RNA sequence: GGGAACGACUCGAGUAGAGUCGAAAAGUCUAGUCGCUAGCGCCGAUCAAGCGCUAGCGACUAGACUUUAUUGAUCGUCCUACUUUCGAGUAGGAAAAAGAAACAACAACAACAAC
Reactivity to DMS in 0.01 (KOAc 150mM, MgCl2 10mM, bicine 150mM(pH8.5), 24C), signal-to-noise 2, nucleotides 027 to 095: g010u000c000u000a020g030u020c000g020c010u010a000g040c000g070c010c020g000a140u030c300a130a120g000c040g040c000u000a010g020c020g010a080c020u010a000g020a020c010u000u000u020a030u030u020g010a120u000c080g000u000c080c010u010a090c040u010u000u020c090g000a020g030u010a020g000g030a010a000